[RMDB]
RNA sequence: GGGAACGACUCGAGUAGAGUCGAAAAUCACGAAGUCCUCGUAUCGCCGCUCGAGGCGGCGCGUCCACUCCUCGGUGUCGUCGACGUAGGGCCAGAGCCGUCCCUGAUGAGGGACGUCGUCGUAGGCUAAUCUUCGCCGGUUCGCCGGCGAAGAUUAAAAAGAAACAACAACAACAAC
Reactivity to DMS in 0.01 (KOAc 150mM, MgCl2 10mM, bicine 150mM(pH8.5), 24C), signal-to-noise 1, nucleotides 027 to 126: u010c140a080c110g020a070a130g000u010c100c050u000c000g000u010a120u020c030g020c010c000g030c020u000c100g000a060g000g000c110g000g010c050g020c180g050u010c040c110a100c060u020c040c020u000c030g000g010u000g010u020c030g040u000c030g010a170c100g020u010a080g050g000g030c010c030a110g000a130g000c150c010g010u000c000c000c000u000g000a120u010g010a090g010g020g000a000c000g000u010c020g020u020c010g000u010a200g000g010c050
This 177-nucleotide RNA was probed chemically with DMS. For DMS the reverse transcriptase was MarathonRT. Conditions: 150 mM KOAc, 10 mM MgCl2 and 150 mM bicine (pH 8.5), 24 C. Values cover nucleotides 27 to 126.